Source: RMDB library OK2TRN, as collected in RNAgym. Chemical mapping of a 177-nucleotide RNA with 2A3 and DMS. 2A3 is a SHAPE reagent: it acylates the 2'-hydroxyl of flexible nucleotides of all four kinds. The reactions ran in a buffer of 150 mM KOAc, 10 mM MgCl2 and 150 mM bicine (pH 8.5), at 24 C. For DMS, 1,831 sequencing reads were counted. The 2A3 profile rests on 1,778 reads.
RNA sequence: GGGAACGACUCGAGUAGAGUCGAAAAACAUCAGCACUGCAUUAGGAGCUGAUAAGACACAGCAGAUACUCAAAAGCUCUGGCAGUGAAGUGCAAGGGGUCAUGACCAAGAUAGUGACACUCCCUGCCGAACGCAGUCAAUUCGUUGACUGCGUUCGAAAAGAAACAACAACAACAAC
Reactivity to 2A3 in 0.01 (KOAc 150mM, MgCl2 10mM, bicine 150mM(pH8.5), 24C), signal-to-noise 2, nucleotides 027 to 126: a000c050a100u180c040a000g080c010a010c000u010g040c010a110u070u250a070g070g020a010g000c000u000g000a010u080a030a000g040a030c020a000c020a110g150c030a020g020a140u100a110c020u000c010a030a050a010a010g000c010u010c010u030g030g000c010a010g000u000g030a090a010g110u050g030c040a070a060g030g020g000g020u050c000a000u070g030a070c070c010a000a030g040a120u150a050g050u020g010a020c020a030c060u050c020c010c000u010g040c000
Reactivity to DMS in 0.01 (KOAc 150mM, MgCl2 10mM, bicine 150mM(pH8.5), 24C), signal-to-noise 3, nucleotides 027 to 126: a060c070a070u010c100a160g000c000a050c010u010g010c030a120u010u000a150g030g020a030g020c000u020g010a190u010a060a030g000a120c280a040c070a100g030c120a070g000a160u000a050c040u000c100a010a080a200a060g000c020u000c000u000g010g000c000a000g000u000g000a040a080g000u010g030c070a040a000g000g010g010g000u010c010a050u000g000a100c220c110a100a110g000a140u010a150g010u000g000a070c050a040c050u000c010c010c020u000g010c030